[RMDB]
RNA sequence: GGGAACGACUCGAGUAGAGUCGAAAAGCGCACCAGGAAUGUCUUGUAGGCGCCCGCCCCCACCGCGCGCCGGACGCGUCCCUGCCCCUUGUACACACCGCCCGUCGCUCCUACCGACUGGGCGCGGGAUGUUCCCUUGUUUCGACAAGGGAACAUCAAAAGAAACAACAACAACAAC
Reactivity to DMS in 0.01 (KOAc 150mM, MgCl2 10mM, bicine 150mM(pH8.5), 24C), signal-to-noise 2, nucleotides 027 to 126: g030c020g020c050a060c070c000a050g000g000a100a070u020g020u020c050u010u000g010u000a100g010g040c020g000c000c030c050g010c030c030c000c000c030a060c140c030g000c110g000c080g010c010c040g020g000a040c040g020c120g000u000c040c020c030u010g000c020c030c020c040u010u000g010u020a080c120a080c110a130c080c020g020c020c000c000g000u000c010g000c070u010c030c100u000a120c160c020g020a070c020u080g030g000g000c010g020c030g000g010
Reactivity to 2A3 in 0.01 (KOAc 150mM, MgCl2 10mM, bicine 150mM(pH8.5), 24C), signal-to-noise 3, nucleotides 027 to 126: g050c010g000c020a060c050c010a010g040g080a150a120u140g080u080c020u060u100g040u080a070g070g000c010g000c000c010c000g030c010c020c000c000c000a060c010c020g020c000g000c010g010c020c030g000g020a030c010g000c010g030u020c010c000c000u020g020c030c000c000c000u020u100g100u120a050c050a000c000a010c060c000g010c000c010c000g030u030c010g010c020u060c010c030u070a100c000c010g010a010c050u150g020g000g000c010g000c010g000g070